[RMDB]
RNA sequence: GGGAACGACUCGAGUAGAGUCGAAAAGAAUUCCUUCGGGAAUUCAAAAACCGUAGGCAACGCCCAUCUUUUGACGUAUGGACCGUUCGAAAGAGCGGUCUUUGUAUACGAUAAGAUGGCGUUGCCUAAACGGAAAAAAGUCAAGUUCGCUUGACAAGUGAAAAACUUGAUUCGUCAAGUUUUUCACAAAAGAAACAACAACAACAAC
Reactivity to DMS in 0.01 (KOAc 150mM, MgCl2 10mM, bicine 150mM(pH8.5), 24C), signal-to-noise 1, nucleotides 027 to 156: g030a010a020u000u000c000c010u000u010c300g110g030g000a100a000u000u000c000a090a090a050a070a110c010c010g020u000a050g020g000c020a030a020c020g000c180c070c000a000u020c000u000u020u000u000g000a210c000g010u020a040u020g000g000a060c000c020g010u010u000c000g020a150a050a240g000a010g040c000g000g030u000c000u000u000u010g000u020a020u000a010c040g020a260u020a020a020g020a020u000g000g000c080g010u000u000g020c000c000u000a010a000a030c000g050g030a010a070a040a070a110a110g000u000c010a000a020g020u000u010c300g030c040u020u000g000a020c020a190a170
An RNA of 207 nucleotides, treated with DMS and read out base by base. The reactions ran in a buffer of 150 mM KOAc, 10 mM MgCl2 and 150 mM bicine (pH 8.5), at 24 C.